Structure probing data (2A3) for a 207-nucleotide construct. Reactivities are rounded to 0.1 and cut off at 0 and 3. Conditions: 150 mM KOAc, 10 mM MgCl2 and 150 mM bicine (pH 8.5), 24 C. Source: RMDB library M2RFPK, as collected in RNAgym. 2A3 adducts were read by reverse transcription with SuperScript II with manganese.
RNA sequence: GGGAACGACUCGAGUAGAGUCGAAAAAGAAGGAAACCCAUCGACUGUCACCAGAUGCUGCAUCACCUGAUCACUGAUGGCUCAACGGUAUCCGGCGGUACAACUGAAUACUUGUAGCUGCCUUUUGAAAAGGAGUUCAUCUUCGGAUGAACUCCAACUCCUAGGCGAUGUUCGCAUCGCCUAGGAGAAAAGAAACAACAACAACAAC
Reactivity to 2A3 in 0.01 (KOAc 150mM, MgCl2 10mM, bicine 150mM(pH8.5), 24C), signal-to-noise 1, nucleotides 027 to 156: a000g110a070a000g040g000a010a060a060c000c000c020a000u050c020g080a060c000u030g060u030c040a020c000c020a060g030a080u020g010c030u030g000c030a040u100c000a080c110c030u070g010a060u010c010a000c090u030g000a010u030g110g000c060u090c120a050a020c050g010g030u010a070u000c050c020g000g050c040g020g040u070a050c060a050a020c050u210g140a130a060u080a180c020u000u160g000u030a030g070c070u060g000c000c010u090u100u050u180g080a070a080a040a030g000g000a000g000u000u000c000a000u000c000u010u100c130g100g000a000u000g010a000a010c000u000c000c000a000a000